[RMDB]
The record gives the reactivity of an RNA of 207 nucleotides to 2A3.
The reactions ran in a buffer of 150 mM KOAc, 10 mM MgCl2 and 150 mM bicine (pH 8.5), at 24 C.
For 2A3 the reverse transcriptase was SuperScript II with manganese.
RNA sequence: GGGAACGACUCGAGUAGAGUCGAAAAUUAUGUGGAGGUCUGAGCUAGGGAGACAGCGCGGUGGUACAUCAUCAUGCAGGCGACAUCAGAGACUUUCUUCUUCGCUUGGGUGCAUUAUCAUAAAAAGUGAUUUAGACUGGAGCUGAUUGAUGCAAAAGUGGUAUUAGGCAUUCGUGCCUAAUACCACAAAAGAAACAACAACAACAAC
Reactivity to 2A3 in 0.01 (KOAc 150mM, MgCl2 10mM, bicine 150mM(pH8.5), 24C), signal-to-noise 2, nucleotides 027 to 156: u120u020a050u170g030u060g030g020a060g020g050u020c060u090g020a000g000c050u030a060g030g020g020a050g030a030c020a050g010c030g000c020g040g000u000g030g020u040a000c000a080u090c010a050u040c000a000u110g050c050a010g050g080c010g020a020c020a020u040c020a040g020a000g050a100c050u060u100u000c010u040u000c010u010u000c010g000c000u030u070g100g000g050u090g020c020a110u070u140a100u300c050a020u210a150a110a030a010a040g020u010g000a030u000u050u000a020g000a020c030u030g040g020a010g030c000u000g030a070u000u070g020a030u130g080c020a000a160a020a030